[RMDB]
The record gives the reactivity of an RNA of 177 nucleotides to 2A3 and DMS.
Reactivities are given for positions 27 through 126.
The DMS profile rests on 13,313 reads.
For DMS the reverse transcriptase was MarathonRT.
RNA sequence: GGGAACGACUCGAGUAGAGUCGAAAAGAAACUAUGUGCUGUCCUGAAGCCUCCACAGGUCCGCGAAAGCGAUCGGAAACGAAUGCGCAUAGUUCAGAGCUGAAGGAGGCACGGCUCAAAAUAAAAACGAGCAUGAUCUGUUCGCAGAUCAUGUUCGAAAAGAAACAACAACAACAAC
Reactivity to 2A3 in 0.01 (KOAc 150mM, MgCl2 10mM, bicine 150mM(pH8.5), 24C), signal-to-noise 9, nucleotides 027 to 126: g050a020a020a000c000u000a000u000g010u010g000c030u070g040u030c000c000u000g030a080a010g000c000c000u000c000c000a010c000a010g000g010u000c040c050g000c010g060a100a060a030g060c040g050a090u110c020g010g040a030a070a030c040g030a110a030u070g000c000g000c000a000u000a000g000u000u020c030a030g000a000g000c010u020g020a170a040g040g000a000g000g000c010a000c000g000g000c000u000c010a060a080a010a000u150a030a060a020a010a010
Reactivity to DMS in 0.01 (KOAc 150mM, MgCl2 10mM, bicine 150mM(pH8.5), 24C), signal-to-noise 5, nucleotides 027 to 126: g000a150a010a010c010u010a010u000g000u000g030c000u010g020u010c000c010u000g000a100a150g030c000c000u000c000c010a300c030a000g000g000u010c060c100g030c000g000a130a110a150g010c000g020a040u000c000g000g010a060a050a120c020g000a040a040u010g000c000g000c020a000u020a010g000u000u000c070a060g000a020g010c000u000g010a160a070g010g000a020g010g020c010a300c020g000g000c000u000c000a150a060a090a060u040a050a100a080a060a100